An RNA of 170 nucleotides, treated with DMS and read out base by base. Values cover nucleotides 27 to 129. The data come from the RNA Mapping Database (RMDB), library 15KLIB. Reactivities are rounded to 0.1 and cut off at 0 and 3.

[RMDB]
RNA sequence: GGGAACGACUCGAGUAGAGUCGAAAAAGCCGUGGGAAUCCCCAGACCUCCCUUCUCCACACUCCUUCCCCCCUGCGGGGCCCCCCCAUAAGAUGGCGAGAUCUCCACUCAUUGGGUCCUUCGUCCACCAGAGCCGGCUUCGGCCGGCUCAAAAGAAACAACAACAACAAC
Reactivity to DMS in 0.01 (KOAc 150mM, MgCl2 10mM, bicine 150mM(pH8.5), 24C), signal-to-noise 2, nucleotides 027 to 129: a190g080c020c020g020u050g010g020g000a100a190u010c090c020c110c060a040g000a020c020c000u020c170c090c000u020u030c040u000c000c020a010c070a100c060u000c010c050u030u000c000c000c000c010c020c140u060g000c070g000g000g000g000c000c000c040c070c070c000c000a020u000a000a120g070a040u070g000g090c070g000a010g050a080u030c030u030c010c100a030c160u000c100a130u030u050g000g040g000u010c190c030u000u010c010g010u000c040c000a040c000c070a060